[RMDB]
RNA sequence: GGGAACGACUCGAGUAGAGUCGAAAAACGAAAACUACGCACUCGCAGCCUAAUAACCUGCGCUGAGCCCUUCUCCCCCAGCUUGCCUGUGUCCUAGGGAAUUGGAAGGUCAUCCUUCACAGGAUCGUCUAGGUAAUCCCUUUCGAGGGAUUACCAAGUACCAACUUCGAUUCGUCGAAGUUGGUACAAAAGAAACAACAACAACAAC
Reactivity to 2A3 in 0.01 (KOAc 150mM, MgCl2 10mM, bicine 150mM(pH8.5), 24C), signal-to-noise 2, nucleotides 027 to 156: a000c070g020a050a000a050a040c060u130a010c090g000c040a050c010u040c000g000c020a010g000c000c020u100a150a140u060a020a060c010c000u000g030c040g040c100u050g050a030g000c000c010c130u180u030c080u070c040c010c000c000c000a010g030c010u030u110g030c030c000u010g000u010g010u110c010c040u060a020g000g010g070a050a100u150u090g060g030a050a030g060g010u110c030a060u120c010c000u080u070c030a020c030a010g020g010a020u100c000g080u020c180u050a060g000g000u000a000a000u000c000c000c000u000u010u020c070g100a030g020g000g000a000u000u000a000c000c000a000a000
Reactivity to DMS in 0.01 (KOAc 150mM, MgCl2 10mM, bicine 150mM(pH8.5), 24C), signal-to-noise 1, nucleotides 027 to 156: a140c040g000a060a040a060a160c010u000a080c020g020c020a070c030u000c010g060c060a040g020c050c000u030a100a070u000a110a120c190c020u000g020c080g030c110u010g010a130g010c000c020c040u000u010c000u000c040c000c010c010c030a110g050c050u000u020g010c010c010u040g030u000g030u010c070c030u000a140g020g000g000a080a070u000u010g030g030a050a070g050g020u000c090a100u000c050c030u000u000c130a120c050a070g030g000a100u040c070g000u010c050u000a150g050g000u010a000a030u000c000c000c000u000u000u000c300g010a030g030g000g030a010u000u000a000c000c000a050a020